Chemical mapping of a 177-nucleotide RNA with DMS.

[RMDB]
RNA sequence: GGGAACGACUCGAGUAGAGUCGAAAAAGAGUCUACGGACUCAAUAAAUUUGUGUCUAUACUCUGUCACUUUACUUUUGGCCUCAAGUCAUUGCAGUAAAGUGGCAGAGUAUAGACACAAAUUUAAAGAUAAUGCUGUCAUUCGUGACAGCAUUAUCAAAAGAAACAACAACAACAAC
Reactivity to DMS in 0.01 (KOAc 150mM, MgCl2 10mM, bicine 150mM(pH8.5), 24C), signal-to-noise 3, nucleotides 027 to 126: a040g010a010g000u010c010u000a130c180g020g010a010c010u000c010a070a130u020a000a020a010u000u000u010g010u000g000u000c000u000a000u000a000c000u000c000u020g000u000c000a010c000u000u000u000a000c000u000u000u010u000g000g010c000c050u050c300a100a300g000u000c010a010u020u010g010c190a010g010u000a000a000a010g000u000g000g010c000a000g020a000g000u000a000u000a000g000a000c010a000c000a010a000a000u000u000u000a040a080a120

Values cover nucleotides 27 to 126.